[RMDB]
RNA sequence: GGGAACGACUCGAGUAGAGUCGAAAAACUGAUACCUGACGAGGUAUCAGAAUGACUUCGUGGUAGAGCGCCACGAACGGAAAAUAAAGAAAGCUCGAUUGAAACGCACCGUGUACGCACGGUGCGAAAAAGUCGAUCCAGUUCGCUGGAUCGACAAGAAAGUGAGUUAGUUCGCUAACUCACUUUCAAAAGAAACAACAACAACAAC
Reactivity to 2A3 in 0.01 (KOAc 150mM, MgCl2 10mM, bicine 150mM(pH8.5), 24C), signal-to-noise 2, nucleotides 027 to 156: a000c010u000g000a000u000a000c010c020u040g140a070c120g200a070g000g000u000a000u010c000a000g010a020a010u110g060a030c020u000u000c000g000u000g000g050u020a090g020a000g010c000g010c000c000a000c000g000a000a000c040g070g020a060a000a030a030u070a020a020a030g130a020a050a000g000c030u010c010g090a190u100u260g030a110a080a000c000g000c000a020c000c010g000u000g010u110a020c210g000c050a000c030g000g060u000g000c000g000a010a010a010a010a010g010u010c000g000a000u000c000c020a000g020u060u130c160g100c170u000g000g000a000u000c000g000a000c000a000a020
An RNA of 207 nucleotides, treated with 2A3 and read out base by base. 2A3 adducts were read by reverse transcription with SuperScript II with manganese. Reactivities are given for positions 27 through 156.